[RMDB]
Source: RMDB library OK1LIB, as collected in RNAgym. The record gives the reactivity of an RNA of 177 nucleotides to DMS and 2A3. The RNA was probed in 150 mM KOAc, 10 mM MgCl2 and 150 mM bicine (pH 8.5) at 24 C. As a SHAPE reagent, 2A3 marks flexible, mostly unpaired nucleotides at the ribose 2'-OH. Values cover nucleotides 27 to 126.
RNA sequence: GGGAACGACUCGAGUAGAGUCGAAAACAUCUCUUCCUCUAGUGAGCGAUACGCGCUCCGUUGUGCUCAUUAUUAUUCGCGUUACGCACGACCGUGUAACAUCCCGGCACGAGGGGAAUCAGGUGGCUCUCGCUGGUCGUUUCGACGAUCAGUGGGGAAAAGAAACAACAACAACAAC
Reactivity to DMS in 0.01 (KOAc 150mM, MgCl2 10mM, bicine 150mM(pH8.5), 24C), signal-to-noise 9, nucleotides 027 to 126: c040a030u000c000u000c180u000u000c000c000u000c020u010a080g010u020g010a030g010c030g010a220u040a070c230g010c050g010c070u010c040c050g010u020u010g010u010g000c010u010c110a080u020u020a120u030u020a080u020u010c100g010c100g000u000u010a100c120g000c020a050c080g000a050c100c040g010u010g010u000a040a060c110a110u010c040c030c030g000g000c010a020c010g010a050g000g010g000g000a020a020u010c190a020g010g010u000g000g010c070
Reactivity to 2A3 in 0.01 (KOAc 150mM, MgCl2 10mM, bicine 150mM(pH8.5), 24C), signal-to-noise 9, nucleotides 027 to 126: c010a020u010c000u000c000u010u010c010c000u000c000u010a030g020u030g210a010g000c010g050a070u070a190c110g020c000g000c090u000c010c010g020u020u060g010u020g000c020u020c130a080u030u180a090u120u090a100u120u180c090g020c030g120u060u080a040c040g000c010a010c030g040a030c020c040g010u010g010u020a060a030c020a100u080c010c020c000g040g000c010a000c010g010a020g010g010g000g000a000a010u050c020a010g000g020u010g020g010c010